[RMDB]
RNA sequence: GGGAACGACUCGAGUAGAGUCGAAAAGGUUCUCCUGCUCUUCCGGAGCUUUCUUUCGAGGUCUUCCGCGUCUUUUCUUGCUUGGAUCCAUUUCUCGAGGACGUCCUCCCUUCCUCCCCUCCGGGUCACACCGAUUCCUUCGGGAAUCGGAAAAGAAACAACAACAACAAC
Reactivity to 2A3 in 0.01 (KOAc 150mM, MgCl2 10mM, bicine 150mM(pH8.5), 24C), signal-to-noise 6, nucleotides 027 to 129: g090g010u070u020c030u020c020c030u060g020c020u010c010u140u000c050c100g030g010a020g010c000u020u080u010c000u030u080u080c040g040a040g010g070u030c030u090u040c030c020g040c020g050u060c040u020u120u080u060c050u050u100g070c020u030u050g060g010a010u050c020c010a130u060u090u030c030u010c020g040a050g050g020a080c040g040u020c000c020u020c010c000c000u020u040c010c000u000c000c000c000c010u000c010c000g010g000g030u060c020a030c010a020
Reactivity to DMS in 0.01 (KOAc 150mM, MgCl2 10mM, bicine 150mM(pH8.5), 24C), signal-to-noise 4, nucleotides 027 to 129: g040g030u010u020c050u040c040c060u020g050c000u040c020u030u020c130c080g020g040a100g040c050u000u000u000c030u000u000u000c110g010a080g000g010u000c050u040u000c000c000g030c130g040u040c020u020u030u030u030c040u040u030g050c080u010u050g000g030a060u030c060c050a090u010u050u020c030u020c050g040a080g070g020a190c160g040u020c040c060u030c010c030c040u020u020c050c030u020c050c010c050c000u000c040c040g040g000g000u000c040a120c170a160
Notes: The data come from the RNA Mapping Database (RMDB), library 15KLIB. This 170-nucleotide RNA was probed chemically with 2A3 and DMS. Reactivities are given for positions 27 through 129. The DMS profile rests on 14,925 reads. The reactions ran in a buffer of 150 mM KOAc, 10 mM MgCl2 and 150 mM bicine (pH 8.5), at 24 C. For 2A3 the reverse transcriptase was SuperScript II with manganese.